[RMDB]
RNA sequence: GGGAACGACUCGAGUAGAGUCGAAAAGAUAUGGAAGCGGAUGGGAGGAUUCUGGUCGGAAACGACCACUAUCCGAGGAUCAUCCCGCUUCCUAAGUCAAAACGUUACGGAGUUCGCUCCGUAACGAGAAUGUCAAUGGCUUCGGCCAUUGACAUUCAAAAGAAACAACAACAACAAC
Reactivity to DMS in 0.01 (KOAc 150mM, MgCl2 10mM, bicine 150mM(pH8.5), 24C), signal-to-noise 1, nucleotides 027 to 126: g000a020u010a040u010g010g000a020a010g020c000g030g030a020u000g030g000g020a010g020g000a020u000u000c070u010g020g040u010c000g020g000a010a020a070c000g020a020c000c000a000c040u000a010u000c000c000g010a060g070g000a040u000c020a000u000c090c030c160g030c000u000u000c000c000u010a000a030g000u000c000a110a070a100a260c020g000u000u000a010c010g000g010a060g000u000u030c280g000c000u010c000c000g000u000a000a000c000g000a010
Conditions: 150 mM KOAc, 10 mM MgCl2 and 150 mM bicine (pH 8.5), 24 C. This 177-nucleotide RNA was probed chemically with DMS. DMS adducts were read by reverse transcription with MarathonRT. For DMS, 1,384 sequencing reads were counted. Source: RMDB library TTRDES, as collected in RNAgym.